[RMDB]
RNA sequence: GGGAACGACUCGAGUAGAGUCGAAAAUAGGACAAUUUCUCCACCUGCAAGGUCUUUCAAGUAAGAACUCUUCUUUCCUUUAAGGCAAUUAGCCCAUUGCCAAAAGGUUUUACUGUCUUAAAGCUGGAACUAUCUGAGAUCUAAUUCCAAGGACUUACUAAAUGGAGCUAUUCGUAGCUCCAUUUAGAAAAGAAACAACAACAACAAC
Reactivity to DMS in 0.01 (KOAc 150mM, MgCl2 10mM, bicine 150mM(pH8.5), 24C), signal-to-noise 1, nucleotides 027 to 156: u000a090g020g030a080c030a120a140u000u000u020c030u010c050c040a080c070c010u020g000c030a110a100g000g030u010c010u000u010u030c020a040a120g000u000a120a000g020a050a150c050u030c080u000u000c020u000u010u000c030c030u000u000u020a010a090g030g010c000a020a040u010u010a080g040c040c030c080a240u010u000g000c140c130a150a070a070a090g000g010u000u000u020u000a040c040u000g050u010c010u000u000a020a020a040g040c070u000g010g020a020a010c030u010a050u010c050u010g000a170g030a080u000c060u000a060a070u000u000c040c040a040a080g000g000a110c000u020u000a160
Reactivity to 2A3 in 0.01 (KOAc 150mM, MgCl2 10mM, bicine 150mM(pH8.5), 24C), signal-to-noise 3, nucleotides 027 to 156: u090a020g030g000a010c030a070a110u010u060u060c050u010c000c020a060c010c030u050g030c050a070a050g000g020u020c030u040u150u080c050a070a090g020u080a100a030g050a120a080c030u030c020u140u030c030u030u100u050c030c030u010u040u030a050a000g000g000c000a000a060u050u050a100g010c030c010c020a090u050u100g090c010c000a050a070a000a000g020g020u000u000u020u060a020c000u020g050u040c000u020u080a070a040a010g010c050u060g060g000a070a010c040u040a070u160c040u080g040a010g010a060u070c010u040a070a040u100u020c060c000a010a040g090g040a030c050u080u080a030
This 207-nucleotide RNA was probed chemically with DMS and 2A3.
Source: RMDB library OK3TST, as collected in RNAgym.
The reactions ran in a buffer of 150 mM KOAc, 10 mM MgCl2 and 150 mM bicine (pH 8.5), at 24 C.
For 2A3 the reverse transcriptase was SuperScript II with manganese.
The 2A3 profile rests on 1,523 reads.